[RMDB]
RNA sequence: GGGAACGACUCGAGUAGAGUCGAAAAUGGAGAGCUGAAGUAUCGAGAGAUGAAGGCGGAGCGAACAAGGUGGACUUUCCAAAGGAAAUGUAAACGUGGCGGAUGGAUAAUAAACCACAGAGGGAUCGUGUCUGUAUGCUUUCGAGCAUACAGACACAAAAGAAACAACAACAACAAC
Reactivity to DMS in 0.01 (KOAc 150mM, MgCl2 10mM, bicine 150mM(pH8.5), 24C), signal-to-noise 2, nucleotides 027 to 126: u110g000g020a030g000a120g000c040u000g000a020a150g020u000a120u080c100g000a110g010a080g010a110u010g000a080a100g000g000c030g000g010a090g010c070g020a080a060c170a200a040g000g000u000g020g000a090c100u000u000u000c020c050a020a160a060g030g000a060a050a000u030g020u000a030a090a200c160g010u010g040g000c030g010g020a080u010g000g000a130u060a110a070u020a060a130a020c020c030a000c020a080g010a090g000g000g000a070u000c120
Reactivity to 2A3 in 0.01 (KOAc 150mM, MgCl2 10mM, bicine 150mM(pH8.5), 24C), signal-to-noise 2, nucleotides 027 to 126: u190g040g000a030g030a050g050c000u070g010a200a000g080u130a020u140c080g000a000g000a000g000a170u070g070a060a040g000g000c010g010g030a030g000c030g030a050a010c000a140a030g070g010u030g000g060a040c040u000u070u000c000c010a040a000a120g080g080a130a000a020u100g040u140a030a150a000c030g030u030g000g010c000g060g000a010u010g000g000a010u100a100a010u050a020a120a000c000c000a000c030a000g040a060g050g000g000a000u080c150
The record gives the reactivity of an RNA of 177 nucleotides to DMS and 2A3.
2A3 adducts were read by reverse transcription with SuperScript II with manganese.
Values are in units of 0.01, from 0 to 300, in steps of 10.
For DMS the reverse transcriptase was MarathonRT.
The reactions ran in a buffer of 150 mM KOAc, 10 mM MgCl2 and 150 mM bicine (pH 8.5), at 24 C.
Reactivities are given for positions 27 through 126.
The DMS profile rests on 1,549 reads.